Background: Structure probing data (2A3 and DMS) for a 207-nucleotide construct. The RNA was probed in 150 mM KOAc, 10 mM MgCl2 and 150 mM bicine (pH 8.5) at 24 C. The DMS profile rests on 2,215 reads. DMS adducts were read by reverse transcription with MarathonRT. DMS (dimethyl sulfate) methylates the pairing face of unpaired adenines and cytosines. For 2A3, 2,444 sequencing reads were counted.

RNA sequence: GGGAACGACUCGAGUAGAGUCGAAAACAAUAGCAUCGGCACCGUGUCGCACAUGAAGGGUGUGACGACGGACGACGCCGACCGUGCGUUCAAUUCCGUCAUCGACCAAAACCCUGCGAUGCUGCCAGAGGUUGCUGUUGGCAACUACGCAGUGUCCAGUACGCAAAAAUUUCGAUUUUUGCGUACUAAAAGAAACAACAACAACAAC
Reactivity to 2A3 in 0.01 (KOAc 150mM, MgCl2 10mM, bicine 150mM(pH8.5), 24C), signal-to-noise 4, nucleotides 027 to 156: c040a010a180u140a090g010c020a080u050c030g020g000c020a020c070c010g030u020g010u010c000g040c000a020c010a140u200g200a180a090g100g030g000u060g010u050g020a020c030g040a010c000g010g010a010c050g010a010c040g000c000c000g090a050c090c060g110u230g030c000g060u130u220c070a060a120u140u020c000c000g030u040c040a080u110c050g110a140c060c010a030a030a100a100c000c010c000u010g000c070g010a010u010g000c000u020g000c000c030a100g050a070g170g010u040u020g010c030u020g060u180u030g050g000c010a020a030c020u110a050c070g010c010a030g000u000g020u110c030c000
Reactivity to DMS in 0.01 (KOAc 150mM, MgCl2 10mM, bicine 150mM(pH8.5), 24C), signal-to-noise 1, nucleotides 027 to 156: c110a100a050u010a130g000c060a000u000c070g010g040c030a110c050c040g040u030g010u000c000g020c080a050c050a060u000g030a150a080g010g010g060u000g010u000g030a020c000g040a020c010g030g000a020c300g000a030c020g100c000c030g000a050c110c130g010u000g000c000g000u010u010c060a120a200u000u000c000c000g070u010c000a090u000c050g000a220c120c080a040a020a110a130c000c010c030u000g010c060g010a090u000g010c000u000g000c000c060a180g010a130g010g000u000u000g020c000u040g030u000u000g010g000c090a080a070c030u010a070c100g020c070a190g010u000g020u000c040c050